[RMDB]
RNA sequence: GGGAACGACUCGAGUAGAGUCGAAAAUCGAUGAUCACCAAAUCACUGGAGAGGUUUUUUAUGAAUUCAAAAAGACUUGGAGCUCUGAUAUCCGGAGACUUUCGAAGGCAGACAUUCCGACUAAUGACUCCUUAUCUUACUUCGGUAAGAUAAGGAGAAAAGAAACAACAACAACAAC
Reactivity to 2A3 in 0.01 (KOAc 150mM, MgCl2 10mM, bicine 150mM(pH8.5), 24C), signal-to-noise 6, nucleotides 027 to 126: u110c050g020a050u120g010a040u070c050a040c080c020a050a090a070u090c030a040c080u050g010g030a060g010a060g120g050u040u020u020u000u030u060a200u170g120a180a130u140u150c140a090a020a010a010a010g040a030c020u040u060g050g020a040g010c030u000c020u070g060a100u070a080u240c040c010g030g020a030g050a070c020u080u080u030c060g050a040a030g030g010c000a020g020a040c020a040u110u070c020c020g030a040c060u120a160a050u170g040a060
Reactivity to DMS in 0.01 (KOAc 150mM, MgCl2 10mM, bicine 150mM(pH8.5), 24C), signal-to-noise 3, nucleotides 027 to 126: u010c020g000a120u020g020a060u010c050a120c040c060a080a140a070u010c050a060c070u020g000g000a090g000a090g000g000u000u010u000u000u060u000a050u010g000a140a080u010u040c050a030a060a070a040a050g000a040c040u010u000g010g000a060g010c120u000c080u000g010a030u010a040u030c090c050g000g010a080g000a080c080u000u000u000c190g000a120a040g000g000c010a020g020a070c090a050u000u010c020c020g020a120c090u010a080a070u030g010a300